An RNA of 207 nucleotides, treated with 2A3 and read out base by base. The reactions ran in a buffer of 150 mM KOAc, 10 mM MgCl2 and 150 mM bicine (pH 8.5), at 24 C.

RNA sequence: GGGAACGACUCGAGUAGAGUCGAAAAUGCUUCCUCGAUUCGGAUCGGCUCAUCUCGACUAGAGGCGGCGGUCCUCAGUGCUCUUACUCUUUUCUGAUAAAGAGGAGACUGCUGGACUCGCCGCCCAAGUUCGAGCAUGAGCCAAUUCCGAACGAGGCCUCUACUCGUGGUUCGCCACGAGUAGAGGAAAAGAAACAACAACAACAAC
Reactivity to 2A3 in 0.01 (KOAc 150mM, MgCl2 10mM, bicine 150mM(pH8.5), 24C), signal-to-noise 1, nucleotides 027 to 156: u110g040c040u130u130c060c000u040c020g240a300u010u000c000g000g010a030u020c130g000g030c020u000c000a010u040c010u000c000g000a010c050u060a030g050a180g130g000c000g000g000c000g000g020u000c000c000u000c000a020g040u130g280c000u010c040u110u300a260c000u050c010u020u040u280u090c300u280g160a220u220a160a020a000g030a000g020g020a000g000a000c000u000g060c040u000g020g000a060c080u070c230g010c000c020g030c000c000c000a000a000g010u000u100c000g000a010g000c080a000u000g000a000g000c000c000a000a000u010u010c000c000g010a000a000c000g000a000g000g000